[RMDB]
RNA sequence: GGGAACGACUCGAGUAGAGUCGAAAAGGACUACCCGUCAGGGUUUUGGCCAUACGGACAGCCGGGUCCACUGCCUGAAAGAAAACAAAACAAAACAAAAACAAAACAAAACAAAAACAAAAGAAAAUAUCAUUAGGGAUUUCGAUCCCUAAUGAUAAAAAGAAACAACAACAACAAC
Reactivity to DMS in 0.01 (KOAc 150mM, MgCl2 10mM, bicine 150mM(pH8.5), 24C), signal-to-noise 2, nucleotides 027 to 126: g000g000a120c000u000a010c030c000c010g030u100c300a040g000g000g020u000u010u080u000g000g010c040c010a130u010a250c080g000g000a010c030a180g000c020c020g000g000g000u030c030c020a160c080u000g000c010c000u000g000a030a070a070g000a050a110a020a070c240a080a020a140a070c090a060a030a030a010c200a080a100a020a090a040c170a170a020a060a110c270a060a110a130a000c170a160a010a110a050a070c250a140a090a070a100g060a120a010a030a080
Reactivity to 2A3 in 0.01 (KOAc 150mM, MgCl2 10mM, bicine 150mM(pH8.5), 24C), signal-to-noise 4, nucleotides 027 to 126: g050g030a070c040u050a030c050c000c010g060u070c030a060g000g020g080u060u080u100u100g020g000c040c000a030u090a230c050g030g050a040c020a040g090c020c000g020g000g010u000c000c010a010c020u050g010c010c000u040g110a050a050a010g080a020a130a030a010c070a040a070a020a030c020a000a060a020a020c090a020a160a030a020a040c080a020a080a020a000c030a000a110a030a010c030a020a130a030a030a020c040a010a080a040a000g090a030a140a010a000
Structure probing data (DMS and 2A3) for a 177-nucleotide construct.
For DMS, 1,389 sequencing reads were counted.
The RNA was probed in 150 mM KOAc, 10 mM MgCl2 and 150 mM bicine (pH 8.5) at 24 C.
It was measured as part of the RMDB library OK1LIB.
Values cover nucleotides 27 to 126.
The 2A3 profile rests on 2,333 reads.